Structure probing data (2A3 and DMS) for a 207-nucleotide construct.
The RNA was probed in 150 mM KOAc, 10 mM MgCl2 and 150 mM bicine (pH 8.5) at 24 C.
It was measured as part of the RMDB library RNAMAK.

[RMDB]
RNA sequence: GGGAACGACUCGAGUAGAGUCGAAAACGCAGUUCGCUGCGCUCAUGCCGUAGGCGAUGCGUACAAGCGCAUGGAGAAGUACAUUCGAAAGAGUGUACGGAUCCAUGAACUACGCUUGUGAUCAUCGCCUAAACGGGCCAACACACUUCGGUGUGAAAUUCAUAAACGAAUUCGUUCGUUUAUGAAUAAAAGAAACAACAACAACAAC
Reactivity to 2A3 in 0.01 (KOAc 150mM, MgCl2 10mM, bicine 150mM(pH8.5), 24C), signal-to-noise 8, nucleotides 027 to 156: c010g010c000a010g020u090u120c160g050c130u010g020c020g020c030u070c060a130u220g040c000c010g010u010a010g000g000c000g000a000u000g020c050g060u060a000c000a010a000g000c010g010c010a000u010g010g000a040g000a060a010g000u000a000c000a000u010u000c010g030a100a080a050g000a040g000u010g000u010a000c010g000g010a000u000c000c000a000u000g000a030a040c130u240a050c060g000c000u000u000g000u010g010a010u050c000a000u000c000g000c000c000u000a000a000a000c000g010g010g010c030c040a180a030c010a000c000a000c010u060u070c180g110g000u010g000u010g050a110a050
Reactivity to DMS in 0.01 (KOAc 150mM, MgCl2 10mM, bicine 150mM(pH8.5), 24C), signal-to-noise 5, nucleotides 027 to 156: c000g030c020a080g010u000u010c250g040c000u010g010c010g040c030u000c060a120u000g030c000c020g030u000a030g010g000c010g040a010u000g000c180g050u000a030c000a030a010g010c030g030c000a030u000g020g010a020g020a300a300g010u000a000c000a020u010u000c010g010a250a150a250g000a040g050u000g010u000a010c000g010g000a300u010c000c000a060u000g010a060a210c000u000a090c010g020c000u000u000g020u000g010a100u000c000a020u000c010g010c010c000u000a000a010a080c030g000g010g020c020c050a070a210c020a020c000a020c020u000u010c250g030g020u020g010u000g000a040a090